Structure probing data (2A3 and DMS) for a 177-nucleotide construct. The reactions ran in a buffer of 150 mM KOAc, 10 mM MgCl2 and 150 mM bicine (pH 8.5), at 24 C. The 2A3 profile rests on 908 reads. DMS adducts were read by reverse transcription with MarathonRT. Reactivities are given for positions 27 through 126. It was measured as part of the RMDB library OK2TRN. 2A3 adducts were read by reverse transcription with SuperScript II with manganese.

[RMDB]
RNA sequence: GGGAACGACUCGAGUAGAGUCGAAAACAGAGGGCUCAGGUCCCAGACGUGCCUGGAUGAUGUGGGGUCACCCACAUUGGGGGGAGUGUGAGGGAGCCACCGCCUGUGGGAUCUUGGCAGGAGGACAGUCCUCACCUUGUUUCGACAAGGUGAGGACAAAAGAAACAACAACAACAAC
Reactivity to 2A3 in 0.01 (KOAc 150mM, MgCl2 10mM, bicine 150mM(pH8.5), 24C), signal-to-noise 1, nucleotides 027 to 126: c050a070g000a160g050g020g010c010u040c050a040g040g130u060c010c010c000a060g080a070c050g070u100g040c010c030u020g010g050a120u210g000a000u020g020u050g000g010g000g010u170c120a200c030c010c010a020c010a010u000u010g000g020g000g000g000g000a090g030u030g010u040g070a210g030g020g040a000g070c000c000a010c000c000g020c000c030u100g000u140g030g060g010a030u010c030u070u090g080g010c010a000g080g000a050g000g060a020c030a030
Reactivity to DMS in 0.01 (KOAc 150mM, MgCl2 10mM, bicine 150mM(pH8.5), 24C), signal-to-noise 1, nucleotides 027 to 126: c170a120g000a110g010g000g010c030u000c130a100g010g000u000c010c000c040a030g020a080c140g010u020g000c050c020u040g000g000a100u000g010a040u000g030u000g000g010g010g020u030c300a080c000c010c000a000c020a020u000u000g010g000g050g000g000g000a150g010u000g020u000g030a130g020g000g000a090g010c010c050a160c070c040g000c000c000u000g000u000g000g000g010a090u020c070u000u000g020g010c040a040g000g000a060g000g010a070c110a100